Structure probing data (2A3 and DMS) for a 170-nucleotide construct. The data come from the RNA Mapping Database (RMDB), library 15KLIB. For 2A3, 53,048 sequencing reads were counted. Reactivities are rounded to 0.1 and cut off at 0 and 3. 2A3 adducts were read by reverse transcription with SuperScript II with manganese. DMS adducts were read by reverse transcription with MarathonRT.
RNA sequence: GGGAACGACUCGAGUAGAGUCGAAAACUUACAAACAUACAGCGAGACUGGUAGUGAUCUUCUUUACCAACCACCCAACUGUAGCAUAACCUCUGGCGUGUUGCAAAGCGGUUUGGUGAAAAUGUCAAUGGAACUUACUUCGGUAAGUUCAAAAGAAACAACAACAACAAC
Reactivity to 2A3 in 0.01 (KOAc 150mM, MgCl2 10mM, bicine 150mM(pH8.5), 24C), signal-to-noise 9, nucleotides 027 to 129: c030u130u160a060c060a050a170a000c030a040u190a010c020a020g030c040g050a040g050a080c030u050g060g020u050a040g070u040g110a110u030c040u100u000c000u010u160u030a030c010c020a020a030c030c020a010c020c010c000a030a020c040u020g020u060a020g010c010a010u050a120a090c010c030u190c120u160g080g010c090g040u060g020u020u010g000c010a050a060a030g040c040g000g000u030u040u040g010g010u020g020a030a040a010a030u100g020u040c020a020a060u090g050
Reactivity to DMS in 0.01 (KOAc 150mM, MgCl2 10mM, bicine 150mM(pH8.5), 24C), signal-to-noise 9, nucleotides 027 to 129: c040u020u050a080c110a110a110a080c110a050u070a070c070a050g040c080g030a060g010a100c060u030g010g010u000a000g000u000g000a060u000c010u050u020c000u020u030u010a010c000c040a060a020c010c060a010c030c000c020a070a090c150u020g030u000a080g020c020a030u020a150a140c040c030u040c130u060g000g000c160g000u000g000u000u000g020c030a020a100a050g040c110g020g010u030u030u020g040g040u050g030a030a020a050a060u000g010u000c070a030a050u050g000